[RMDB]
RNA sequence: GGGAACGACUCGAGUAGAGUCGAAAACGUACGAGUACCUAGGCUACGAUCUAGCACUCGAUCACAUGGUACGAUCAUGCUAGGCUAGUCGUACGAUCCGCUCUAGUGAUCGGAUCUCGCGCUAGUACAGGAAGACGCGAUUCGUCGCGUCUUCCUGAAAAGAAACAACAACAACAAC
Reactivity to 2A3 in 0.01 (KOAc 150mM, MgCl2 10mM, bicine 150mM(pH8.5), 24C), signal-to-noise 2, nucleotides 027 to 126: c010g040u050a020c010g010a040g070u070a070c010c020u010a020g010g000c020u010a010c100g130a220u000c020u000a010g000c000a020c030u120c090g050a040u050c010a050c020a150u290g120g000u260a060c050g010a030u040c010a010u040g050c030u020a040g000g000c020u010a000g060u030c010g000u030a020c000g000a000u000c000c000g100c000u030c050u130a150g140u110g160a100u000c000g000g030a040u010c040u050c030g100c030g050c020u020a010g010u030a030
Reactivity to DMS in 0.01 (KOAc 150mM, MgCl2 10mM, bicine 150mM(pH8.5), 24C), signal-to-noise 1, nucleotides 027 to 126: c060g130u000a000c030g010a040g040u000a030c070c030u020a030g010g040c010u000a010c300g000a070u000c000u000a070g000c070a030c170u020c100g010a070u000c060a080c070a240u020g030g040u010a150c070g000a010u000c030a160u000g030c020u000a070g000g020c170u000a010g000u000c030g050u000a040c110g010a040u000c000c000g010c030u010c000u000a220g000u000g030a020u000c020g000g000a060u010c000u010c130g000c040g020c030u000a070g010u000a040